[RMDB]
RNA sequence: GGGAACGACUCGAGUAGAGUCGAAAACGCGUCAUGUUCGCAUGACGCGCAUAACCGAGAAAGGAGCUCGGUAUAAAACUCCAACCCUUGGAAACAAGGGAAAACCGAUAGUAUUCGUACUAUCGAACGCAUGCAUUAUAUUCGUAUAAUGCAUGCGAAAAGAAACAACAACAACAAC
Reactivity to DMS in 0.01 (KOAc 150mM, MgCl2 10mM, bicine 150mM(pH8.5), 24C), signal-to-noise 3, nucleotides 027 to 126: c010g010c020g000u000c020a000u000g000u000u030c200g000c000a010u000g000a010c000g030c000g030c050a010u010a080a300c020c000g000a000g000a080a080a060g010g000a010g000c000u010c000g010g010u000a020u000a010a010a010a030c000u000c000c000a260a300c010c000c000u000u000g000g000a160a170a290c000a000a010g000g000g010a020a010a030a120c180c020g010a010u000a000g000u000a020u000u010c170g030u000a000c000u000a010u000c010g000a060a140
Reactivity to 2A3 in 0.01 (KOAc 150mM, MgCl2 10mM, bicine 150mM(pH8.5), 24C), signal-to-noise 2, nucleotides 027 to 126: c000g000c000g010u000c000a000u010g030u050u050c140g000c120a010u000g000a000c010g010c000g000c010a010u050a100a120c000c010g000a000g000a020a200a060g040g000a010g000c000u010c020g010g070u000a000u010a000a000a000a000c000u000c010c000a050a080c010c000c000u000u010g020g000a070a040a000c010a000a000g000g000g000a080a010a010a040c080c010g000a000u000a010g000u010a020u070u060c250g020u030a000c000u010a000u020c000g010a070a010
Overview:
The data come from the RNA Mapping Database (RMDB), library M2PK50. An RNA of 177 nucleotides, treated with DMS and 2A3 and read out base by base. For DMS the reverse transcriptase was MarathonRT. In probing experiments dimethyl sulfate is read out at A N1 and C N3, which are open when not base-paired. The RNA was probed in 150 mM KOAc, 10 mM MgCl2 and 150 mM bicine (pH 8.5) at 24 C. Reactivities are rounded to 0.1 and cut off at 0 and 3.